[RMDB]
RNA sequence: GGGAACGACUCGAGUAGAGUCGAAAAGACGAGCAGGCCGAUAAUCUUGUGCAGUAUGCAUGCUCGUAACUCCAGCGCACAAGUGGAGGCACAAGAUUUAAAUCCAGCAUAGCGCAGGAGCCGCAGACACCUAUCAUGCAUUCGUGCAUGAUAGGUGAAAAGAAACAACAACAACAAC
Reactivity to 2A3 in 0.01 (KOAc 150mM, MgCl2 10mM, bicine 150mM(pH8.5), 24C), signal-to-noise 6, nucleotides 027 to 126: g090a010c010g000a010g000c000a020g060g000c030c060g060a060u060a120a030u020c010u010u020g000u000g000c060a080g100u210a080u120g030c030a020u040g010c000u000c010g010u020a030a030c000u010c010c000a020g000c010g010c000a040c020a280a070g100u020g030g020a060g070g000c000a000c000a000a010g000a000u050u120u220a090a110a040u020c010c010a030g030c050a190u130a130g010c010g020c020a030g000g020a010g000c000c020g090c030a030g050a080
Reactivity to DMS in 0.01 (KOAc 150mM, MgCl2 10mM, bicine 150mM(pH8.5), 24C), signal-to-noise 5, nucleotides 027 to 126: g030a020c020g000a040g000c000a010g000g010c020c300g020a120u020a040a040u010c000u010u010g000u000g010c000a200g020u040a060u010g000c020a060u000g000c000u000c000g000u000a050a110c010u010c020c010a120g020c010g000c020a090c180a100a160g020u000g000g000a060g020g000c010a010c020a020a020g000a080u030u010u020a090a080a140u010c020c010a050g010c090a110u010a070g020c000g010c000a090g000g020a010g020c050c020g010c150a060g000a260